[RMDB]
RNA sequence: GGGAACGACUCGAGUAGAGUCGAAAACAGGCACAGUUCGCUGUGCCUGAAAAGUGCAGGCUUAGCACAAUAAGCGAAAAAGAUCAUGAAAAUGAUCAAAAAAAACGUGAGCGUUCGCGCUCACGAAGUUUGGUAAACAGUUCGCUGUUUACCAAACAAAAGAAACAACAACAACAAC
Reactivity to DMS in 0.01 (KOAc 150mM, MgCl2 10mM, bicine 150mM(pH8.5), 24C), signal-to-noise 2, nucleotides 027 to 126: c020a030g000g000c010a010c000a040g050u000u020c210g040c000u010g020u000g020c000c000u000g000a010a020a040a180g020u010g020c010a110g000g000c080u000u000a100g030c050a030c150a100a090u000a060a080g020c030g020a020a060a120a130a120g000a010u000c000a010u010g000a150a090a190a010u000g000a030u010c000a020a000a000a040a060a040a060a070c010g020u000g000a000g010c000g040u000u030c270g030c000g040c000u000c000a000c000g000a060a040
Reactivity to 2A3 in 0.01 (KOAc 150mM, MgCl2 10mM, bicine 150mM(pH8.5), 24C), signal-to-noise 2, nucleotides 027 to 126: c010a000g010g020c000a000c000a000g010u050u080c120g060c110u000g000u000g000c020c000u010g000a000a000a000a000g040u040g030c010a020g130g000c060u090u070a020g000c030a000c010a170a150u110a070a010g030c060g020a060a070a000a000a020g010a010u010c000a020u040g070a020a100a000a040u010g000a020u080c100a130a020a010a010a000a020a020a020c020g010u000g000a000g010c020g040u040u060c150g020c030g000c040u000c010a010c010g010a020a000